Chemical mapping of a 177-nucleotide RNA with DMS and 2A3.
The reactions ran in a buffer of 150 mM KOAc, 10 mM MgCl2 and 150 mM bicine (pH 8.5), at 24 C.
[RMDB]
RNA sequence: GGGAACGACUCGAGUAGAGUCGAAAAGCAUCCCGCUUCGGCGGGAUGCAAAAGCGAUCGUGUCAUUGCCUCGAUCGCAACUCAUAUAAUGAUGGGCAGUGAAAAGUCUGGGCUUCGGCCCAGACAACAACACUACGAUGUUCGCAUCGUAGUGUUGAAAAGAAACAACAACAACAAC
Reactivity to DMS in 0.01 (KOAc 150mM, MgCl2 10mM, bicine 150mM(pH8.5), 24C), signal-to-noise 2, nucleotides 027 to 126: g000c000a010u000c000c000c000g040c010u000u020c180g010g030c000g000g000g010a000u000g010c000a010a010a090a150g010c000g000a020u000c000g020u000g000u010c020a030u000u000g010c020c000u000c000g000a010u000c000g020c010a010a020c020u010c040a120u000a110u000a110a060u000g010a100u010g000g010g020c010a000g020u000g000a150a140a090a130g000u000c010u000g000g000g020c010u010u010c200g060g000c000c000c000a000g000a000c000a030a100
Reactivity to 2A3 in 0.01 (KOAc 150mM, MgCl2 10mM, bicine 150mM(pH8.5), 24C), signal-to-noise 4, nucleotides 027 to 126: g010c000a010u000c050c000c020g030c020u050u060c160g140g000c020g000g020g020a000u000g000c010a000a010a010a030g010c000g000a000u000c010g000u010g100u110c010a040u010u080g010c000c010u020c000g010a000u000c000g000c000a000a010c000u010c020a030u160a020u050a250a190u180g150a070u100g050g000g000c010a000g010u000g020a110a040a000a040g010u010c010u010g010g000g000c010u060u060c240g070g000c000c000c000a000g000a000c000a000a000